[RMDB]
RNA sequence: GGGAACGACUCGAGUAGAGUCGAAAAGAUAUGGAAACGAAGACAGCUCCUACCCACCGUAAUCGGAAACGAUGUACGAGGGAGUCGAGUUUCCUAAGUCAAACGUAAUGAGUUCGCUCAUUACGAAGAGGGAAUAGGACUUCGGUCCUAUUCCCUCAAAAGAAACAACAACAACAAC
Reactivity to DMS in 0.01 (KOAc 150mM, MgCl2 10mM, bicine 150mM(pH8.5), 24C), signal-to-noise 2, nucleotides 027 to 126: g010a070u000a300u090g000g030a010a050a000c000g010a070a290g000a020c300a240g050c070u000c100c030u000a150c030c010c010a300c140c010g020u000a010a000u000c010g000g000a130a150a090c000g000a010u000g000u000a000c000g010a110g000g000g020a060g000u000c060g000a210g000u000u000u010c000c000u010a050a070g010u000c100a070a050a250c020g000u000a000a000u020g000a070g020u000u010c140g010c030u000c000a020u010u010a000c000g030a030a070
Reactivity to 2A3 in 0.01 (KOAc 150mM, MgCl2 10mM, bicine 150mM(pH8.5), 24C), signal-to-noise 1, nucleotides 027 to 126: g040a000u070a060u180g010g010a010a000a000c000g100a090a060g100a040c040a060g050c040u090c040c000u100a240c070c050c020a030c080c070g010u010a000a010u030c010g010g010a100a020a020c000g020a000u040g030u160a000c010g030a110g000g010g030a000g020u030c040g020a010g040u000u000u010c000c000u020a040a020g080u050c050a080a030a130c010g000u020a000a000u000g010a000g040u060u120c300g050c080u010c000a000u010u000a000c020g020a050a040